[RMDB]
RNA sequence: GGGAACGACUCGAGUAGAGUCGAAAAGAUAUGGACCGUACGGGUCGCGCCACAUCGGAAACGAUGUGGAACUACGAACUACGACAGUACGGUCCUAAGUCAAAAGGUGCCACUUCGGUGGCACCAAGUUAAUACAUGGGUUCGCCCAUGUAUUAACAAAAGAAACAACAACAACAAC
Reactivity to DMS in 0.01 (KOAc 150mM, MgCl2 10mM, bicine 150mM(pH8.5), 24C), signal-to-noise 6, nucleotides 027 to 126: g010a020u000a300u000g000g010a010c000c000g010u000a010c020g020g010g020u000c010g010c210g010c010c000a000c000a010u000c010g010g000a070a060a130c000g010a000u000g020u000g000g000a020a020c150u010a230c160g010a080a090c150u010a150c050g010a030c030a230g000u000a000c000g000g000u000c010c000u000a010a050g010u010c030a070a060a100a110g010g020u000g010c000c000a020c000u000u010c190g010g000u000g000g000c000a000c000c000a000a030
Reactivity to 2A3 in 0.01 (KOAc 150mM, MgCl2 10mM, bicine 150mM(pH8.5), 24C), signal-to-noise 6, nucleotides 027 to 126: g010a000u030a020u070g000g000a000c010c010g010u000a010c050g300g290g030u040c080g020c000g000c090c000a000c000a000u000c000g000g010a030a020a000c010g000a000u000g000u020g010g010a010a000c000u110a040c060g190a170a060c100u250a090c290g010a000c000a010g000u010a000c000g000g000u000c000c000u000a000a000g000u000c010a010a000a010a130g000g000u000g000c000c000a020c030u060u140c300g100g010u000g000g000c000a000c000c000a000a000
Record summary
The data come from the RNA Mapping Database (RMDB), library TTRDEL. An RNA of 177 nucleotides, treated with DMS and 2A3 and read out base by base. The DMS profile rests on 9,155 reads. The reactions ran in a buffer of 150 mM KOAc, 10 mM MgCl2 and 150 mM bicine (pH 8.5), at 24 C.